[RMDB]
RNA sequence: GGGAACGACUCGAGUAGAGUCGAAAAUAACGGACUAGGAAACUCGAUCUUUAAAGUGGUAAUCCUAGCGAAUCCACGGCGAGGAAACUAGGACACUAACCAUGUGAUCCCGGACGCUAGAAGAAAACGAUAAAGGGUCUUUCGAGACCCUUUAUCGAAAAGAAACAACAACAACAAC
Reactivity to DMS in 0.01 (KOAc 150mM, MgCl2 10mM, bicine 150mM(pH8.5), 24C), signal-to-noise 1, nucleotides 027 to 126: u000a070a110c190g000g020a080c030u000a090g000g010a110a180a210c000u000c050g020a060u000c120u030u010u000a020a100a080g010u000g000g000u010a150a200u000c060c000u000a020g010c020g000a300a130u020c000c000a060c030g010g000c020g060a050g000g000a050a150a010c000u000a000g010g000a040c090a100c190u000a120a100c140c200a040u000g040u000g020a050u000c000c000c000g010g000a060c110g020c050u000a000g000a180a100g010a050a040a030a080